[RMDB]
RNA sequence: GGGAACGACUCGAGUAGAGUCGAAAACAGCGGUCGACCAGUUUGAGCGCGAUCCGGUGCCGGGCCAGGCGGCUGUAGAGGUCGGUGACGAUACCGGCGAGUUCUGCUCGCGCGUCUCCAGUCGUCGAGCAUUUAAUGCGUUCGCGCAUUAAAUGCUAAAAGAAACAACAACAACAAC
Reactivity to 2A3 in 0.01 (KOAc 150mM, MgCl2 10mM, bicine 150mM(pH8.5), 24C), signal-to-noise 4, nucleotides 027 to 126: c050a010g050c020g050g080u060c040g020a080c000c010a120g020u070u090u150g070a030g020c030g010c030g030a060u020c030c030g080g020u050g030c010c000g010g020g030c000c010a030g020g030c010g000g010c000u030g010u080a070g040a040g030g050u050c030g010g050u070g040a070c130g050a040u120a160c000c010g020g000c010g010a020g010u100u140c160u280g020c000u000c000g020c010g010c020g090u000c010u000c010c000a020g020u030c010g010u000c040g000
Reactivity to DMS in 0.01 (KOAc 150mM, MgCl2 10mM, bicine 150mM(pH8.5), 24C), signal-to-noise 2, nucleotides 027 to 126: c070a150g010c000g010g000u000c000g010a050c080c120a190g000u010u010u010g010a250g000c040g000c050g000a060u040c030c060g030g010u010g000c010c020g010g010g000c040c080a090g000g010c020g010g020c000u010g000u010a050g000a080g010g000u010c020g000g020u010g000a150c080g020a110u020a040c030c040g000g000c000g010a060g000u010u020c180u020g000c000u010c000g000c010g000c030g000u020c020u020c000c010a100g000u020c030g010u000c070g010
The record gives the reactivity of an RNA of 177 nucleotides to 2A3 and DMS. The reactions ran in a buffer of 150 mM KOAc, 10 mM MgCl2 and 150 mM bicine (pH 8.5), at 24 C. The 2A3 profile rests on 3,439 reads. The data come from the RNA Mapping Database (RMDB), library OK1LIB.